[RMDB]
RNA sequence: GGGAACGACUCGAGUAGAGUCGAAAAAUUGGCAUUAUUUUGAUGCACAGCCCUUGACCAGGAAGGUACAACAGCUUUUCUAUACAGAGGACAUGGCCUCAAGAUUUGCUGAUGGGCUCUGCUUAUUCAUGGUUAUUAAGUUCGCUUAAUAACCAUGAAAAGAAACAACAACAACAAC
Reactivity to 2A3 in 0.01 (KOAc 150mM, MgCl2 10mM, bicine 150mM(pH8.5), 24C), signal-to-noise 5, nucleotides 027 to 126: a000u100u090g040g000c010a020u020u060a090u080u240u090u200g030a010u030g000c020a010c010a130g030c010c010c000u020u110g030a020c000c000a040g180g090a140a060g120g020u080a130c030a100a010c010a060g000c000u030u050u010u010c020u000a110u030a110c080a060g020a020g030g010a020c050a190u150g140g050c000c000u000c010a000a000g010a020u010u020u020g000c010u020g010a070u040g020g010g000c010u020c030u060g010c000u050u080a100u070u070
Reactivity to DMS in 0.01 (KOAc 150mM, MgCl2 10mM, bicine 150mM(pH8.5), 24C), signal-to-noise 3, nucleotides 027 to 126: a060u020u000g000g010c040a010u000u000a100u010u010u020u010g000a030u000g010c020a060c080a110g010c020c000c010u000u000g010a130c180c040a070g010g010a090a080g020g020u000a060c040a100a150c070a070g010c000u000u000u000u000c010u000a110u010a100c210a180g010a010g000g010a130c140a100u010g020g000c000c020u000c020a070a020g000a010u000u000u000g000c020u000g000a080u000g000g010g000c010u000c090u010g000c030u000u000a080u000u020
The record gives the reactivity of an RNA of 177 nucleotides to 2A3 and DMS. Conditions: 150 mM KOAc, 10 mM MgCl2 and 150 mM bicine (pH 8.5), 24 C. In probing experiments dimethyl sulfate is read out at A N1 and C N3, which are open when not base-paired. For DMS, 2,609 sequencing reads were counted. High 2A3 reactivity points to a flexible backbone, as in loops and unpaired stretches. It was measured as part of the RMDB library 15KREP.